[RMDB]
RNA sequence: GGGAACGACUCGAGUAGAGUCGAAAAAGGUCGAGCAGGGACGAAAGUCGGGACUAGUGAUCCGGCACCGGCAAGUGGAAGCGGUGUCGCUCAACGGAUAAAAGGUACCCCGGGGAUAACAGGCUGACUCUCUUGGUCUUUUCGAAGACCAAGAGAGAAAAGAAACAACAACAACAAC
Reactivity to 2A3 in 0.01 (KOAc 150mM, MgCl2 10mM, bicine 150mM(pH8.5), 24C), signal-to-noise 2, nucleotides 027 to 126: a000g040g000u010c010g010a010g030c000a030g020g040g010a040c040g130a140a090a000g020u040c000g010g020g020a010c020u050a030g050u030g100a080u000c030c000g000g000c000a000c000c000g100g050c100a130a060g050u140g170g080a120a000g040c030g000g000u000g010u010c030g000c030u030c050a010a050c020g030g000a010u090a080a120a000a010g080g010u120a110c020c000c000c000g000g000g000g000a040u030a100a010c020a010g020g000c020u020g010a040
Reactivity to DMS in 0.01 (KOAc 150mM, MgCl2 10mM, bicine 150mM(pH8.5), 24C), signal-to-noise 2, nucleotides 027 to 126: a030g000g010u000c050g030a070g070c060a060g000g000g000a050c110g010a050a060a070g000u000c030g000g000g000a080c060u050a060g040u010g000a060u010c170c000g030g000c010a050c060c000g010g030c070a050a080g010u030g010g000a090a120g020c040g000g000u000g000u000c000g000c200u000c100a030a070c080g010g000a060u010a070a020a110a120g000g000u030a060c140c010c040c020g040g030g010g010a060u010a080a110c230a040g000g030c070u000g010a190